[RMDB]
RNA sequence: GGGAACGACUCGAGUAGAGUCGAAAAGGAAGCAUCUGGUCCGUUGCUAAUCCUUCGGAUGUAAUCAUUGGCGGCGCUUCUGCGCCCCGGGGCUGGUGAUGAAACAAAGCAAAUGCCAGUACGAUGGCAAUAAGUCGCUAUUCGUAGCGACUUAUUGAAAAGAAACAACAACAACAAC
Reactivity to 2A3 in 0.01 (KOAc 150mM, MgCl2 10mM, bicine 150mM(pH8.5), 24C), signal-to-noise 9, nucleotides 027 to 126: g050g010a020a010g020c010a040u050c040u100g060g020u030c030c030g030u020u020g000c020u050a060a070u070c010c010u070u050c050g030g020a030u060g040u150a090a040u080c040a050u030u100g060g000c070g030g000c010g020c010u150u120c090u240g010c010g030c000c000c000c010g030g000g040g000c020u020g000g040u040g020a050u040g040a070a050a070c110a090a100a000g060c020a040a040a040u090g000c000c000a000g010u020a060c070g060a090u090g050g000
Reactivity to DMS in 0.01 (KOAc 150mM, MgCl2 10mM, bicine 150mM(pH8.5), 24C), signal-to-noise 9, nucleotides 027 to 126: g010g010a070a050g010c020a080u010c050u010g000g010u010c060c080g020u010u000g000c040u000a120a080u010c120c010u020u010c100g020g010a060u010g010u020a120a050u010c040a060u010u010g010g010c070g010g020c040g020c000u010u020c160u010g010c070g010c020c000c040c060g000g000g010g000c020u000g010g010u000g000a090u010g000a100a080a090c180a070a090a100g020c080a040a060a100u020g010c010c000a020g010u030a090c170g000a090u010g000g000